[RMDB]
Chemical mapping of a 177-nucleotide RNA with 2A3 and DMS.
It was measured as part of the RMDB library OK1LIB.
The DMS profile rests on 1,107 reads.
DMS (dimethyl sulfate) methylates the pairing face of unpaired adenines and cytosines.
RNA sequence: GGGAACGACUCGAGUAGAGUCGAAAAAUAGAGUGGAUAUAUUGCUAUCUAUCCAGCAAGCCAUCUUCUAGAACAACGGAAAGACAAGAUGAGCUAAAUCUCACAAAAGUGUCAAAUGCAUAAAUUCCGCAGCUAUACGAUUCGUCGUAUAGCUGCGAAAAGAAACAACAACAACAAC
Reactivity to 2A3 in 0.01 (KOAc 150mM, MgCl2 10mM, bicine 150mM(pH8.5), 24C), signal-to-noise 4, nucleotides 027 to 126: a030u220a070g140a000g170u040g010g010a000u000a000u000a010u190u180g050c050u020a000u080c000u050a080u040c080c000a010g060c000a050a040g010c000c000a090u060c030u060u010c030u030a100g080a230a040c120a050a030c100g150g000a090a090a040g050a030c030a030a010g050a060u000g020a010g000c000u050a020a000a120u110c070u000c000a080c040a020a120a070a080g080u120g030u050c020a120a170a150u220g100c060a050u090a050a100a060u140u040c060
Reactivity to DMS in 0.01 (KOAc 150mM, MgCl2 10mM, bicine 150mM(pH8.5), 24C), signal-to-noise 1, nucleotides 027 to 126: a180u030a010g050a130g020u000g000g040a010u000a070u100a150u110u000g000c020u040a110u000c170u030a000u010c030c110a040g060c000a040a170g020c000c000a010u000c050u000u050c000u000a180g000a190a080c110a090a200c280g000g060a050a110a070g000a100c210a010a010g000a080u000g080a070g050c000u000a000a100a030u000c000u000c000a060c180a090a090a060a060g000u000g000u000c060a030a030a070u000g000c050a000u050a120a030a210u040u050c070